Conditions: 150 mM KOAc, 10 mM MgCl2 and 150 mM bicine (pH 8.5), 24 C. This 177-nucleotide RNA was probed chemically with DMS and 2A3. It was measured as part of the RMDB library RFMREP. DMS adducts were read by reverse transcription with MarathonRT. For DMS, 2,475 sequencing reads were counted.
[RMDB]
RNA sequence: GGGAACGACUCGAGUAGAGUCGAAAAACUCUUUGGAUACAGUUGUUCAACCAGUUACUAAUCUAACUAAUUGUAACCUGUUGAACAACUGAACCCAAAGGGUGCAAAAAAGGGGCGUUCGCGCCCCCAUACUUCACCAGUUCGCUGGUGAAGUAUGAAAAGAAACAACAACAACAAC
Reactivity to DMS in 0.01 (KOAc 150mM, MgCl2 10mM, bicine 150mM(pH8.5), 24C), signal-to-noise 2, nucleotides 027 to 126: a020c000u000c000u000u000u000g000g000a040u000a150c000a010g000u000u000g010u000u000c000a020a000c010c090a070g000u000u000a000c000u010a020a020u000c000u000a130a180c250u010a170a020u000u000g000u010a000a010c000c050u000g000u000u000g000a020a010c000a020a000c000u000g000a050a020c060c000c000a010a000a020g010g000g010u000g010c100a000a040a070a070a070a080g010g000g010g030c000g050u010u010c230g020c030g010c000c000c000c000
Reactivity to 2A3 in 0.01 (KOAc 150mM, MgCl2 10mM, bicine 150mM(pH8.5), 24C), signal-to-noise 2, nucleotides 027 to 126: a000c000u000c000u000u000u000g020g010a040u070a170c000a010g000u000u000g010u000u000c000a000a010c010c030a000g000u010u000a010c070u210a020a050u060c020u040a030a100c010u030a050a030u060u020g000u000a000a000c010c010u010g000u000u010g000a000a000c000a000a000c000u000g000a000a010c000c000c000a010a000a000g000g000g000u020g010c040a090a110a060a030a020a050g020g000g000g010c020g030u050u070c130g020c000g010c110c000c010c000